[RMDB]
RNA sequence: GGGAACGACUCGAGUAGAGUCGAAAAGAUAUGGAUCCGUUACAGCGCGAGGAGGCUCGGAAACGAGCCUCUCCCCACCGAACUACGCUUGAACGGAUCCUAAGUCAAAGCAUACUUCGGUAUGCAAGUUAAUGCUACAGUUCGCUGUAGCAUUAACAAAAGAAACAACAACAACAAC
Reactivity to 2A3 in 0.01 (KOAc 150mM, MgCl2 10mM, bicine 150mM(pH8.5), 24C), signal-to-noise 3, nucleotides 027 to 126: g000a010u030a030u080g000g000a000u000c000c000g000u020u030a260c010a040g020c060g060c090g190a080g060g020a010g000g010c020u010c010g000g010a020a020a020c000g000a010g020c050c000u010c000u010c000c000c000c020a140c070c100g080a130a060c090u220a070c250g010c010u070u120g010a000a000c000g000g000a010u000c000c000u000a000a000g000u010c050a130a070a030g000c000a000u000a000c010u050u100c240g090g000u010a000u000g000c010a000a000
Reactivity to DMS in 0.01 (KOAc 150mM, MgCl2 10mM, bicine 150mM(pH8.5), 24C), signal-to-noise 4, nucleotides 027 to 126: g000a020u000a210u000g000g000a000u000c000c010g020u000u000a210c040a030g010c010g020c080g000a090g020g000a030g000g010c000u000c000g000g010a050a050a120c000g000a010g010c000c010u000c010u000c010c010c030c060a250c190c120g010a070a110c100u010a150c050g010c010u000u010g040a020a010c010g000g000a020u000c010c000u000a010a050g010u000c030a090a080a110g010c010a000u000a000c000u000u000c160g010g010u000a000u000g000c020a030a070